[RMDB]
RNA sequence: GGGAACGACUCGAGUAGAGUCGAAAAACCGCCGGUGCUCGCGUCGGCGGCGUCGGAUCUGGGCGGUAUCGCGUCCAUGAUCAGCGAGGCCAACGCGAUGGCAGCGGUCCGAACGACGGCGUUGGCGGAUAGCAACGUGGUUCGCCACGUUGCUAUCAAAAGAAACAACAACAACAAC
Reactivity to 2A3 in 0.01 (KOAc 150mM, MgCl2 10mM, bicine 150mM(pH8.5), 24C), signal-to-noise 1, nucleotides 027 to 126: a000c010c000g050c010c010g050g170u000g000c030u020c070g030c000g020u010c010g040g010c040g150g000c000g120u100c120g100g000a010u000c000u020g010g000g000c000g070g040u290a110u300c220g030c010g200u040c020c020a040u240g000a020u000c040a010g100c000g000a020g060g010c010c000a020a010c000g000c000g010a050u130g140g000c010a050g070c010g030g000u070c000c010g040a060a080c050g100a010c060g020g070c050g040u050u130g060g040c040g040
Reactivity to DMS in 0.01 (KOAc 150mM, MgCl2 10mM, bicine 150mM(pH8.5), 24C), signal-to-noise 3, nucleotides 027 to 126: a100c030c010g010c000c000g010g000u000g000c050u010c030g030c000g010u000c020g010g020c010g010g000c030g010u010c060g030g000a010u000c000u000g000g000g010c000g000g020u020a130u000c300g030c010g010u000c010c000a010u010g020a020u000c020a170g000c010g000a060g000g010c010c010a030a050c010g010c000g010a070u010g000g020c040a100g000c040g000g020u010c030c040g000a140a110c120g010a100c060g010g010c040g000u010u000g000g010c060g000